[RMDB]
RNA sequence: GGGAACGACUCGAGUAGAGUCGAAAACAGACGAUUAUUCGUAUGCAAUGGCUGCCUAAUUAGCAAAAGUUAAUUAACCAGCCAUCGCUCUUCAGCGGAGGCGCUUACUCCAAGGCUGUUAGAGUGGCAUAAUUCGCGCUUGAGCUCUGCUCGCGCACCAUGAGCUAUAGUUCGCUAUAGCUCAUGGAAAAGAAACAACAACAACAAC
Reactivity to 2A3 in 0.01 (KOAc 150mM, MgCl2 10mM, bicine 150mM(pH8.5), 24C), signal-to-noise 7, nucleotides 027 to 156: c050a030g110a050c050g050a070u080u110a060u250u290c080g030u040a030u040g020c030a040a030u020g000g000c000u000g000c010c020u020a010a010u000u010a000g000c040a080a170a250a130g010u020u000a000a000u000u000a020a030c050c000a000g000c000c000a020u040c010g000c000u000c000u000u010c000a000g000c020g030g010a010g030g040c100g020c270u180u190a120c010u000c010c010a030a050g190g000c000u010g030u120u030a010g000a010g000u020g040g000c010a010u070a060a080u220u120c050g000c000g010c050u100u290g020a000g000c080u130c150u300g000c000u000c050g000c010g000c000a010
Reactivity to DMS in 0.01 (KOAc 150mM, MgCl2 10mM, bicine 150mM(pH8.5), 24C), signal-to-noise 2, nucleotides 027 to 156: c020a100g020a070c020g030a070u000u000a120u020u010c030g020u000a030u000g030c030a130a040u010g050g030c000u020g010c080c050u010a020a000u000u000a000g010c000a050a090a110a210g020u000u010a010a020u000u010a010a060c050c010a030g030c010c000a040u000c010g030c000u000c020u020u000c000a090g030c030g030g000a300g010g020c220g010c150u000u000a070c040u000c010c000a090a300g020g020c020u000g000u010u000a030g000a110g030u010g030g000c040a120u000a120a160u000u000c050g000c020g040c020u010u010g010a030g010c020u000c100u000g020c010u000c010g000c010g040c010a040

Annotation
The data come from the RNA Mapping Database (RMDB), library RSTRND. Chemical mapping of a 207-nucleotide RNA with 2A3 and DMS. For DMS, 4,145 sequencing reads were counted.